[RMDB]
RNA sequence: GGGAACGACUCGAGUAGAGUCGAAAAUGGGCUACCAGUAAGCGAAAAAUGAUACAGGACGAAAAAAACAUAAUUCGAGAGUUUUCAGGAUGGAUUUUUUUAGGUAUCUAUCAAAACUAUUCUGAUGCAACGUAGAGCACGUUCGCGUGCUCUACAAUCAGUAUACUACCUUCGGGUAGUAUACUGAAAAAGAAACAACAACAACAAC
Reactivity to 2A3 in 0.01 (KOAc 150mM, MgCl2 10mM, bicine 150mM(pH8.5), 24C), signal-to-noise 3, nucleotides 027 to 156: u050g010g010g000c000u010a040c020c010a040g040u110a060a030g040c040g100a100a040a030a020a020u090g030a040u060a120c050a050g090g010a020c030g060a020a030a000a000a030a050a010c070a060u140a060a060u090u040c040g010a030g000a020g190u090u010u270u010c010a000g000g020a000u010g000g040a030u030u000u000u000u010u060u050a020g050g010u160a100u230c010u010a020u000c000a000a000a010a040c010u030a010u020u030c000u000g010a010u050g030c030a050a080c110g000u000a000g000a000g020c010a000c000g010u050u040c180g010c000g070u000g000c000u000c000u000a000c000a000a000
Reactivity to DMS in 0.01 (KOAc 150mM, MgCl2 10mM, bicine 150mM(pH8.5), 24C), signal-to-noise 2, nucleotides 027 to 156: u000g020g020g030c010u000a110c030c040a110g010u000a170a080g050c040g030a020a220a100a080a080u000g000a110u000a100c050a120g000g030a110c030g020a010a000a090a020a110a040a080c020a040u010a100a090u000u000c020g010a180g000a210g000u010u000u000u010c000a050g010g010a040u010g010g030a020u000u000u000u000u000u000u000a020g010g000u000a060u000c020u000a030u010c050a010a020a050a020c020u000a020u000u010c000u000g010a050u020g020c090a090a040c150g040u000a040g020a070g000c000a020c000g000u000u000c300g070c030g040u000g000c010u000c000u010a010c000a040a020